This 177-nucleotide RNA was probed chemically with DMS and 2A3. The RNA was probed in 150 mM KOAc, 10 mM MgCl2 and 150 mM bicine (pH 8.5) at 24 C. DMS (dimethyl sulfate) methylates the pairing face of unpaired adenines and cytosines. For DMS, 11,281 sequencing reads were counted. For 2A3 the reverse transcriptase was SuperScript II with manganese. Reactivities are given for positions 27 through 126.
[RMDB]
RNA sequence: GGGAACGACUCGAGUAGAGUCGAAAAGAUAUGGAAUACAGCACUCUUUGAUCUCACGUCGGAAACGACGUGAGGGGAGAGUGGUAUUCCUAAGUCAAACGCGUUCACUGUUCGCAGUGAACGCGAAGAAAUACUUAGUGUUCGCACUAAGUAUUUCAAAAGAAACAACAACAACAAC
Reactivity to DMS in 0.01 (KOAc 150mM, MgCl2 10mM, bicine 150mM(pH8.5), 24C), signal-to-noise 3, nucleotides 027 to 126: g000a010u000a020u010g000g010a030a010u000a010c010a110g040c030a010c000u000c000u000u000u000g010a020u010c000u000c000a000c000g020u000c000g010g000a010a010a010c000g020a000c000g010u000g000a010g000g000g000g010a000g010a010g030u000g000g000u000a000u000u000c000c000u000a000a090g000u000c010a090a120a240c020g010c010g000u000u000c000a000c010u000g010u000u010c210g010c000a020g010u000g000a000a000c000g020c000g000a010a040
Reactivity to 2A3 in 0.01 (KOAc 150mM, MgCl2 10mM, bicine 150mM(pH8.5), 24C), signal-to-noise 6, nucleotides 027 to 126: g000a000u010a000u050g000g040a020a010u020a010c070a210g300c020a210c000u040c000u300u300u050g010a010u010c000u000c010a000c000g000u000c000g000g000a010a000a000c000g000a000c010g000u000g010a000g000g000g050g080a010g000a000g000u010g000g010u010a000u010u000c000c000u000a010a000g010u000c000a050a060a100c010g000c000g010u010u000c000a000c010u020g120u100u110c300g010c130a000g000u000g000a010a010c000g000c000g000a000a000